[RMDB]
RNA sequence: GGGAACGACUCGAGUAGAGUCGAAAAGGCGGCAGUCCUCAGUACUCUUACUCUUUCCUAUAAAGAGGAGACUGCUGGACUCGCCGCCCAAGCCCGAGCAUGGGCCCCAGUUCCGAACGAAGAGACCACAUCCUCGUGUUCGCACGAGGAAAAAGAAACAACAACAACAAC
Reactivity to DMS in 0.01 (KOAc 150mM, MgCl2 10mM, bicine 150mM(pH8.5), 24C), signal-to-noise 8, nucleotides 027 to 129: g030g040c030g000g010c030a000g010u010c030c020u000c030a030g000u040a170c000u030c020u030u030a300c050u040c010u010u030u060c260c160u010a100u100a060a040a020g000a000g040g030a020g020a040c010u010g040c180u020g040g000a020c000u030c140g050c010c020g000c000c000c000a020a080g020c000c010c020g030a010g020c150a000u040g010g030g050c010c000c070c090a110g020u040u050c040c000g020a040a090c060g000a050a060g020a060g030a100c050c060a080c150a210
Reactivity to 2A3 in 0.01 (KOAc 150mM, MgCl2 10mM, bicine 150mM(pH8.5), 24C), signal-to-noise 9, nucleotides 027 to 129: g010g010c000g000g000c010a010g000u000c010c010u000c000a020g000u170a300c020u010c020u100u130a230c010u020c000u020u080u040c060c090u170a150u250a240a030a000g000a010g010g000a010g010a000c000u000g050c070u000g000g010a000c000u020c030g000c000c000g000c000c000c000a000a000g010c000c000c010g020a070g030c070a090u160g000g010g000c000c000c010c000a010g000u130u040c020c020g020a040a030c020g000a060a030g050a000g010a040c020c020a040c020a120